[RMDB]
RNA sequence: GGGAACGACUCGAGUAGAGUCGAAAACGUAUCCGGUAGUCUGCAUCCAAGAUUCAACCUACCAUGGAUCAUAAACAUAGUACUGUACAUGAUCCGAGGUUGGUUGAAUCUGUGGAUGUGGAACAUGCUGCAACUACGACUUCGGUCGUAGUUGCAGAAAAGAAACAACAACAACAAC
Reactivity to 2A3 in 0.01 (KOAc 150mM, MgCl2 10mM, bicine 150mM(pH8.5), 24C), signal-to-noise 2, nucleotides 027 to 126: c040g010u010a040u120c000c030g030g010u100a110g010u000c000u000g000c000a000u030c000c000a000a000g000a000u000u000c000a020a010c000c000u120a010c070c020a070u160g010g000a020u000c000a000u000a010a300a000c000a000u240a120g190u170a240c220u020g010u010a010c020a090u000g000a000u000c000c010g020a070g000g000u030u000g000g000u000u000g000a000a000u010c000u000g000u000g040g000a000u000g000u010g000g010a060a010c000a000u090g030
Source information:
Chemical mapping of a 177-nucleotide RNA with 2A3. 2A3 adducts were read by reverse transcription with SuperScript II with manganese. Conditions: 150 mM KOAc, 10 mM MgCl2 and 150 mM bicine (pH 8.5), 24 C. Values cover nucleotides 27 to 126.